The data come from the RNA Mapping Database (RMDB), library OK2TST.
This 177-nucleotide RNA was probed chemically with DMS and 2A3.
Reactivities are rounded to 0.1 and cut off at 0 and 3.
2A3 adducts were read by reverse transcription with SuperScript II with manganese.
For DMS the reverse transcriptase was MarathonRT.
[RMDB]
RNA sequence: GGGAACGACUCGAGUAGAGUCGAAAAGCAUCAAUUACGGCAUCGGCCAGUUGCCUUAUUAUGAAGGCUAUGGCCCGCAGAACACAAUUCCGGGCGGCGCUUCGCUCUGGGUAUUCGCCGGCCUCAAUACCGGUAAAUACUUCGGUAUUUACCGGUAAAAAGAAACAACAACAACAAC
Reactivity to DMS in 0.01 (KOAc 150mM, MgCl2 10mM, bicine 150mM(pH8.5), 24C), signal-to-noise 3, nucleotides 027 to 126: g010c040a100u000c100a100a120u010u010a110c080g010g000c020a100u000c230g010g030c030c020a050g020u010u010g000c000c000u000u000a060u000u010a130u020g000a040a040g000g020c010u000a080u010g000g000c020c010c130g070c130a080g000a070a080c110a080c170a070a160u010u000c020c030g000g010g000c030g020g020c240g010c240u000u000c040g010c030u010c030u000g030g000g000u010a030u000u000c110g010c020c010g000g000c030c020u010c110a030a130
Reactivity to 2A3 in 0.01 (KOAc 150mM, MgCl2 10mM, bicine 150mM(pH8.5), 24C), signal-to-noise 2, nucleotides 027 to 126: g040c010a050u090c050a030a270u140u120a100c040g030g010c040a040u090c050g030g000c040c000a010g110u120u110g000c000c010u040u020a080u110u140a200u260g210a010a000g020g000c010u010a060u030g010g000c000c000c030g000c040a050g060a080a040c070a010c020a160a110u130u040c010c020g040g030g000c020g020g000c070g040c220u190u170c020g030c010u020c060u140g080g000g060u050a060u050u070c040g010c030c010g120g030c000c060u090c000a060a020
For 2A3, 1,666 sequencing reads were counted. Reactivities are given for positions 27 through 126.